Annotation: Chemical mapping of a 177-nucleotide RNA with DMS and 2A3. For DMS the reverse transcriptase was MarathonRT. It was measured as part of the RMDB library OK2TRN. The 2A3 profile rests on 1,905 reads. Conditions: 150 mM KOAc, 10 mM MgCl2 and 150 mM bicine (pH 8.5), 24 C.
RNA sequence: GGGAACGACUCGAGUAGAGUCGAAAAGAGGAUUCAACGAGCUUCGUAGCAACGAUAGCAACGUAGCUUUUGCUACGACCCUAGCUAUCGAGGGAAGCUACGUCCCAUGCUCGAGGGCAGAAUCCGAAAUGAUGACCAUCUUCGGAUGGUCAUCAUUAAAAGAAACAACAACAACAAC
Reactivity to DMS in 0.01 (KOAc 150mM, MgCl2 10mM, bicine 150mM(pH8.5), 24C), signal-to-noise 3, nucleotides 027 to 126: g000a300g000g000a010u000u000c010a200a090c040g020a020g000c000u000u000c020g010u000a040g020c020a120a140c030g010a010u010a000g020c030a110a130c000g020u000a000g000c000u010u000u000u000g050c000u000a000c000g000a220c110c190c150u010a180g010c000u010a000u000c000g040a110g030g020g010a160a080g000c010u000a020c030g000u000c130c080c070a130u000g010c000u000c010g000a080g050g030g000c180a120g000a000a010u000c000c010g010a060
Reactivity to 2A3 in 0.01 (KOAc 150mM, MgCl2 10mM, bicine 150mM(pH8.5), 24C), signal-to-noise 2, nucleotides 027 to 126: g150a010g010g010a010u030u010c010a060a000c050g010a000g000c000u050u050c010g020u010a000g020c030a100a070c020g010a030u010a000g000c000a010a020c000g010u010a000g000c030u180u210u240u300g000c000u000a000c010g270a230c020c000c010u030a040g000c000u000a000u010c000g000a090g030g190g070a060a060g000c000u010a010c000g080u060c040c030c020a010u060g000c010u000c010g030a100g000g110g040c140a050g020a000a000u000c000c000g000a000